[RMDB]
RNA sequence: GGGAACGACUCGAGUAGAGUCGAAAAGAUAUGGAUACCAGGCAACAGCUACGGGUCGGAAACGACCCAGUAGACAUGCCUGAUCCUAAGUCAAAGCAGACCACUGUGUUCGCACAGUGGUCUGCAACGAUCGUGAAAGGUUCGCCUUUCACGAUCGAAAAGAAACAACAACAACAAC
Reactivity to DMS in 0.01 (KOAc 150mM, MgCl2 10mM, bicine 150mM(pH8.5), 24C), signal-to-noise 1, nucleotides 027 to 126: g000a030u000a290u000g000g040a050u010a120c300c030a020g000g000c000a060a130c230a190g000c000u000a000c000g010g000g000u000c000g030g010a110a130a160c030g030a050c000c000c000a020g030u000a000g000a080c160a220u000g000c000c000u010g000a040u000c000c000u000a040a190g010u000c040a100a170a140g010c000a010g000a000c000c000a000c000u010g030u010g030u000u020c160g010c020a050c000a040g000u000g000g010u000c000u050g020c000a000a000